[RMDB]
RNA sequence: GGGAACGACUCGAGUAGAGUCGAAAAGGGGUCACGGGAGACCCAUCCCUUUCAUCGAUCAUAUCUGAAGCCUCCACGGAUAUGGGAGAAACCAUGGGUCAUCGAUCGUGACGGAGGCACCCAAAGUGACGUAUGUUUGUUCGCAAACAUACGUCACACAUAAGUGUCUAUUCGUAGACACUUAUGUAAAAGAAACAACAACAACAAC
Reactivity to 2A3 in 0.01 (KOAc 150mM, MgCl2 10mM, bicine 150mM(pH8.5), 24C), signal-to-noise 7, nucleotides 027 to 156: g030g020g080g010u010c000a000c000g010g010g010a040g000a010c010c000c010a020u070c020c010c000u000u040u020c220a300u250c020g000a010u010c000a000u010a000u000c000u040g050a090a020g020c000c000u010c000c000a010c000g000g000a000u000a000u010g000g010g000a040g010a020a010a010c050c030a020u020g000g000g010u010c000a040u300c020g020a030u040c000g000u000g010a010c010g000g000a000g000g010c010a040c000c010c000a080a140a010g000u000g000a000c000g000u000a010u010g010u010u000u010g070u060u130c280g000c160a000a000a000c000a000u000a000c000g000u000c000a000c000
Reactivity to DMS in 0.01 (KOAc 150mM, MgCl2 10mM, bicine 150mM(pH8.5), 24C), signal-to-noise 3, nucleotides 027 to 156: g010g030g020g000u000c010a040c030g010g030g010a100g000a040c000c010c010a020u000c070c020c030u000u010u000c010a240u000c170g010a150u010c000a050u000a020u000c000u000g000a070a130g000c010c000u000c010c040a300c030g000g000a040u000a010u000g010g010g010a080g000a040a030a030c050c070a040u000g010g020g030u000c010a230u010c110g000a100u000c030g040u000g000a030c010g020g030a020g080g030c010a100c030c000c000a070a090a160g020u000g010a030c000g020u000a010u000g000u000u000u010g020u000u010c300g020c020a000a010a010c010a000u000a000c000g000u000c000a000c000